[RMDB]
RNA sequence: GGGAACGACUCGAGUAGAGUCGAAAAGAUAUGGAGCGGCGUGAGAGGUGGGAGAAAUGUGUGAAUGGGUCGGAAACGACCCAUUCACACACACUCCCACUACCCACCUCACGUCGCUCCUAAGUCAGCUUACUAACUAGUUCGCUAGUUAGUAAGCAAAAGAAACAACAACAACAAC
Reactivity to DMS in 0.01 (KOAc 150mM, MgCl2 10mM, bicine 150mM(pH8.5), 24C), signal-to-noise 2, nucleotides 027 to 126: g030a040u010a300u010g000g000a000g050c000g030g020c010g010u010g010a010g020a190g000g010u010g000g000g030a020g000a100a120a030u010g070u000g000u000g000a070a010u010g010g020g010u000c020g020g020a050a050a140c010g000a010c000c000c000a000u000u000c000a000c000a000c010a020c140a120c000u000c000c000c020a010c000u000a000c050c050c140a300c120c000u000c000a000c000g030u010c000g010c000u000c000c000u000a010a060g020u000c010a190

Record summary:
An RNA of 177 nucleotides, treated with DMS and read out base by base. High DMS reactivity at an A or C suggests that its Watson-Crick edge is free. Conditions: 150 mM KOAc, 10 mM MgCl2 and 150 mM bicine (pH 8.5), 24 C.